[RMDB]
Background:
Chemical mapping of a 177-nucleotide RNA with DMS. For DMS the reverse transcriptase was MarathonRT.

RNA sequence: GGGAACGACUCGAGUAGAGUCGAAAACGUUGGACUGAUGAUGAUCUGUACGGCAUCAUCCGUGCGGCUAAAAAAGGCAAAAAAACCUUCAUUCUGCAUGAUGGCCCUCCUUAUGCGAAUGGCAGCACAUGCCCCUGUUAUUCGUAACAGGGGCAUGAAAAGAAACAACAACAACAAC
Reactivity to DMS in 0.01 (KOAc 150mM, MgCl2 10mM, bicine 150mM(pH8.5), 24C), signal-to-noise 3, nucleotides 027 to 126: c140g010u010u000g000g010a040c010u000g030a030u010g000a030u000g000a070u000c030u010g010u000a160c190g000g020c000a030u000c020a020u000c010c130g040u000g010c020g010g010c050u000a000a020a080a070a020a050g020g020c090a010a000a080a070a100a120a060c020c010u010u000c030a050u020u000c020u010g000c030a020u000g000a020u010g000g000c030c040c100u010c060c080u010u000a030u010g000c020g020a030a010u010g010g020c090a040g010c130a140